[RMDB]
RNA sequence: GGGAACGACUCGAGUAGAGUCGAAAAAUGCACUACUGUUGCAUAUUUAAAAUUACUAUCCUCAUCUAAAAAUGCUUUCAAUUCAUCAAUAUCUAUACUUUUAGUAUAUUCACUUGAAAAAAGCACAGAUAUGGACGUGCUUCGGCACGUCCAUAUCAAAAGAAACAACAACAACAAC
Reactivity to 2A3 in 0.01 (KOAc 150mM, MgCl2 10mM, bicine 150mM(pH8.5), 24C), signal-to-noise 2, nucleotides 027 to 126: a000u010g000c010a000c020u300a120c040u240g120u180u000g160c000a000u000a180u000u110u140a240a110a190a190u080u110a030c020u050a060u090c040c150u080c040a120u010c050u100a020a010a020a020a020u110g000c020u050u000u000c050a110a150u010u030c000a050u000c020a030a000u000a000u040c000u070a050u040a160c170u300u220u200u050a000g000u000a000u000a020u080u080c120a130c150u000u010g120a060a000a000a000a000a000g040c040a040c000a090
Conditions: 150 mM KOAc, 10 mM MgCl2 and 150 mM bicine (pH 8.5), 24 C. An RNA of 177 nucleotides, treated with 2A3 and read out base by base. Values cover nucleotides 27 to 126. For 2A3 the reverse transcriptase was SuperScript II with manganese.